RNA sequence: GGGAACGACUCGAGUAGAGUCGAAAAGAUAUGGACCCACUAGGACAUGAAGAUAUGUCGGAAACGACAUAGCUUCAACAGCCUACAUGUGGGUCCUAAGUCAAAGUUACUGGUUCGCCAGUAACAAUCGUAAGCAUUGCUUCGGCAAUGCUUACGAAAAAGAAACAACAACAACAAC
Reactivity to DMS in 0.01 (KOAc 150mM, MgCl2 10mM, bicine 150mM(pH8.5), 24C), signal-to-noise 1, nucleotides 027 to 126: g070a010u000a100u020g000g000a000c000c010c010a010c010u000a040g070g000a030c100a280u000g010a060a020g010a020u000a000u010g030u020c000g020g000a020a040a040c120g030a050c000a000u000a000g000c020u000u000c000a230a080c230a210g010c010c000u000a010c300a140u030g040u000g010g020g000u000c000c000u010a000a050g000u010c010a120a190a190g000u000u000a000c000u010g000g000u010u010c260g030c000c000a010g000u010a010a010c010a070a090
Reactivity to 2A3 in 0.01 (KOAc 150mM, MgCl2 10mM, bicine 150mM(pH8.5), 24C), signal-to-noise 1, nucleotides 027 to 126: g010a000u010a010u080g030g020a020c040c010c000a000c010u030a010g000g010a010c100a300u300g000a000a030g040a010u000a000u040g000u000c030g010g020a000a000a030c000g000a000c010a000u000a000g030c000u000u040c050a080a010c050a020g070c000c000u030a040c070a300u080g000u010g010g060g020u000c000c010u010a040a000g000u020c000a000a050a050g000u000u010a030c000u000g120g010u100u060c300g090c080c010a000g000u000a000a010c020a000a070